[RMDB]
RNA sequence: GGGAACGACUCGAGUAGAGUCGAAAAUUUGAAAAUGAACUCAUUCAGCAUUCUGCAGACAUUACAUGCCAGGCAUUGGGCCCAAUCCACAGGGAUUUUAACAGGAUUGAGAUAGUCUUCACCCUCCGUAAGCUUAGGAUCUGGCCAGAGAGAGAUGUCUAGAUUCAAUCUUCGGAUUGAAUCUAGAAAAAGAAACAACAACAACAAC
Reactivity to 2A3 in 0.01 (KOAc 150mM, MgCl2 10mM, bicine 150mM(pH8.5), 24C), signal-to-noise 2, nucleotides 027 to 156: u130u040u110g010a040a050a010a070u070g030a030a040c020u050c100a110u190u050c060a010g040c010a000u120u020c030u090g040c010a010g030a030c050a100u060u060a060c000a060u160g020c000c060a000g020g010c000a020u040u180g000g050g000c020c000c010a030a040u030c010c010a030c030a040g090g000g030a060u040u120u070u190a100a050c040a020g010g010a030u030u040g040a030g030a050u100a080g080u070c010u110u060c060a120c010c010c010u050c030c010g010u030a060a030g020c010u040u100a000g020g000a060u020c040u040g000g000c020c010a010g060a000g020a010g010a000g000a050u100g020
Reactivity to DMS in 0.01 (KOAc 150mM, MgCl2 10mM, bicine 150mM(pH8.5), 24C), signal-to-noise 1, nucleotides 027 to 156: u020u010u010g020a060a070a120a070u010g000a040a140c020u000c060a090u000u000c060a100g040c050a100u010u030c060u010g000c040a140g020a020c050a070u000u020a050c080a090u000g020c030c030a050g010g030c040a110u010u000g010g020g070c050c020c000a030a080u020c030c030a100c100a170g010g000g010a110u000u010u010u000a100a140c020a090g000g020a070u000u000g000a070g000a160u000a160g000u000c030u000u010c070a050c020c010c020u000c030c010g010u030a070a090g020c020u000u000a070g000g030a030u000c030u000g000g020c010c070a070g000a120g010a160g050a090g000a170u000g010
Chemical mapping of a 207-nucleotide RNA with 2A3 and DMS. Source: RMDB library OK3TST, as collected in RNAgym. The reactions ran in a buffer of 150 mM KOAc, 10 mM MgCl2 and 150 mM bicine (pH 8.5), at 24 C.